[RMDB]
RNA sequence: GGGAACGACUCGAGUAGAGUCGAAAAGGUUGAUAAUGUCCUCAGCAAUUCUGCAAGAACUAAUCGUCGUGAUACGCACCUAAUAUCCAUGAUUUUGUAUGUACAUACCAUUCUCAUACGGCCGCCAACCGCGUGAGCGGUUCGCCGCUCACGCGGUAAAAGAAACAACAACAACAAC
Reactivity to 2A3 in 0.01 (KOAc 150mM, MgCl2 10mM, bicine 150mM(pH8.5), 24C), signal-to-noise 2, nucleotides 027 to 126: g030g000u050u020g070a140u100a300a010u080g030u100c000c010u010c010a000g000c040a080a200u220u010c000u070g030c010a000a110g050a170a050c000u010a040a040u060c010g010u080c020g040u030g020a120u070a050c020g040c000a100c000c000u060a130a000u130a020u130c040c020a120u100g130a170u020u000u230u100g190u060a100u110g110u030a000c060a160u180a030c000c000a000u030u000c060u070c070a060u070a100c040g000g000c020c020g010c000c050a000
Conditions: 150 mM KOAc, 10 mM MgCl2 and 150 mM bicine (pH 8.5), 24 C. Structure probing data (2A3) for a 177-nucleotide construct. For 2A3, 578 sequencing reads were counted.